[RMDB]
RNA sequence: GGGAACGACUCGAGUAGAGUCGAAAAAGAACAGUUCGCGCCACAAGCCCGGCGAGGGCAUGGAUGGCGUCACUGGCCUGAAGGCACUGGGCAUGCGAGAGCUCAACUAUCGGAUGGCCUUCCUCGCCUCACGAGAGCUGUUCGCAGCUCUCGUGAGAAAAGAAACAACAACAACAAC
Reactivity to DMS in 0.01 (KOAc 150mM, MgCl2 10mM, bicine 150mM(pH8.5), 24C), signal-to-noise 1, nucleotides 027 to 126: a090g000a080a150c030a040g020u000u000c210g000c020g020c000c000a040c030a220a130g000c000c000c000g000g030c300g000a270g000g010g030c000a040u000g000g000a190u000g010g000c020g020u000c180a070c080u000g040g010c020c000u000g000a110a090g000g010c080a060c110u010g020g000g000c010a080u020g010c050g000a030g050a050g030c060u000c130a040a080c110u020a170u010c020g000g000a090u010g030g010c020c060u000u000c040c000u000c080g000c060
Reactivity to 2A3 in 0.01 (KOAc 150mM, MgCl2 10mM, bicine 150mM(pH8.5), 24C), signal-to-noise 1, nucleotides 027 to 126: a000g060a060a010c010a010g000u050u090c090g020c000g010c020c000a020c000a060a030g000c050c040c010g090g060c180g070a140g010g000g000c000a010u050g000g100a190u050g010g000c000g020u050c020a010c000u020g000g030c010c020u080g010a030a050g050g000c050a020c160u050g010g020g020c040a040u060g100c040g010a150g000a000g020c020u010c060a070a020c090u110a080u160c070g130g000a050u090g020g060c000c040u000u000c010c030u020c060g000c000

Record summary: Chemical mapping of a 177-nucleotide RNA with DMS and 2A3. The reactions ran in a buffer of 150 mM KOAc, 10 mM MgCl2 and 150 mM bicine (pH 8.5), at 24 C. 2A3 adducts were read by reverse transcription with SuperScript II with manganese. Source: RMDB library OK2TRN, as collected in RNAgym. The DMS profile rests on 851 reads.